[RMDB]
Structure probing data (2A3 and DMS) for a 177-nucleotide construct.
It was measured as part of the RMDB libraries RFM100 and RFMREP.
The RNA was probed in 150 mM KOAc, 10 mM MgCl2 and 150 mM bicine (pH 8.5) at 24 C.
DMS adducts were read by reverse transcription with MarathonRT.
2A3 adducts were read by reverse transcription with SuperScript II with manganese.
RNA sequence: GGGAACGACUCGAGUAGAGUCGAAAAGGGACUGGCCCGAUGAAGCCCGGCAACCUAACUUUAUUUAAGCGUAAAGUGAAGGUGCUAAUUCCAGCAAAAUGGUGUAUUCCGUUUUGGUAGAUAAGAGACAUUGAGACUAGUUCGCUAGUCUCAAUGUAAAAGAAACAACAACAACAAC
Reactivity to 2A3 in 0.01 (KOAc 150mM, MgCl2 10mM, bicine 150mM(pH8.5), 24C), signal-to-noise 7, nucleotides 027 to 126: g020g000g000a020c010u020g050g050c010c000c010g030a020u110g070a030a030g050c000c000c000g000g000c020a110a090c000c000u010a030a000c000u030u000u020a050u050u120u150a150a050g140c070g030u010a000a000a010g000u020g080a120a040g000g000u000g000c010u010a020a030u160u020c010c010a000g020c020a070a010a000a020u010g020g010u110g020u150a100u150u060c000c030g000u010u000u000u020g080g030u110a110g050a170u130a140a120g080a010g010
Reactivity to DMS in 0.01 (KOAc 150mM, MgCl2 10mM, bicine 150mM(pH8.5), 24C), signal-to-noise 8, nucleotides 027 to 126: g000g000g000a300c040u010g000g000c040c010c010g010a140u020g000a130a130g010c000c010c020g010g000c010a060a030c000c010u000a220a020c000u000u000u000a010u000u020u020a140a160g010c300g000u000a000a010a010g000u000g000a060a050g000g000u000g020c010u010a170a080u020u010c000c010a040g000c040a020a010a010a020u000g010g000u010g010u010a060u040u000c000c010g020u000u000u000u000g000g010u020a050g000a120u020a100a110g000a140g010